The record gives the reactivity of an RNA of 207 nucleotides to 2A3 and DMS. The DMS profile rests on 1,311 reads. The RNA was probed in 150 mM KOAc, 10 mM MgCl2 and 150 mM bicine (pH 8.5) at 24 C. Reactivities are rounded to 0.1 and cut off at 0 and 3. DMS adducts were read by reverse transcription with MarathonRT.
RNA sequence: GGGAACGACUCGAGUAGAGUCGAAAACUCGCUCAAACAUACAGAGGUGUUGUGCGAGAUGAAUCUCUCUGCAUUAGAAUGGUCGAAGAAUCAGCGGCGAUUCGAGACCUAAUUAGAAGCCGCAUUAACAGCUUUGGAACACGCCUUGCUGACGUGACAGGUCAUACGGAUUCGUCCGUAUGACCUGAAAAGAAACAACAACAACAAC
Reactivity to 2A3 in 0.01 (KOAc 150mM, MgCl2 10mM, bicine 150mM(pH8.5), 24C), signal-to-noise 2, nucleotides 027 to 156: c000u000c000g000c000u080c010a200a040a070c000a000u300a040c060a110g080a130g120g040u050g000u060u030g010u020g000c060g000a020g000a010u110g130a080a080u040c020u000c000u000c030u090g040c070a170u070u180a090g130a150a130u190g050g000u010c000g000a090a020g000a010a030u000c010a040g000c000g000g000c000g040a010u000u000c000g000a030g000a000c000c000u010a000a000u040u110a050g110a050a000g000c020c000g010c080a010u060u120a130a100c020a000g070c130u120u100u170g010g090a090a050c030a000c060g040c000c000u000u080g000c010u000g010a030c000g020u030g010a030
Reactivity to DMS in 0.01 (KOAc 150mM, MgCl2 10mM, bicine 150mM(pH8.5), 24C), signal-to-noise 1, nucleotides 027 to 156: c020u000c000g030c000u000c000a170a090a080c040a150u010a300c050a150g000a180g010g010u000g000u020u000g020u000g010c040g070a150g020a080u030g000a090a210u010c030u000c010u000c020u000g010c070a170u010u000a020g040a120a080u000g000g010u000c020g000a230a300g040a070a040u000c010a160g050c090g030g010c070g010a070u030u000c010g000a300g020a060c010c000u000a050a120u000u010a260g030a050a060g020c000c030g090c040a270u010u000a120a110c040a080g000c070u000u000u010g000g010a100a120c020a020c000g020c050c000u000u000g050c200u010g040a030c000g030u020g010a300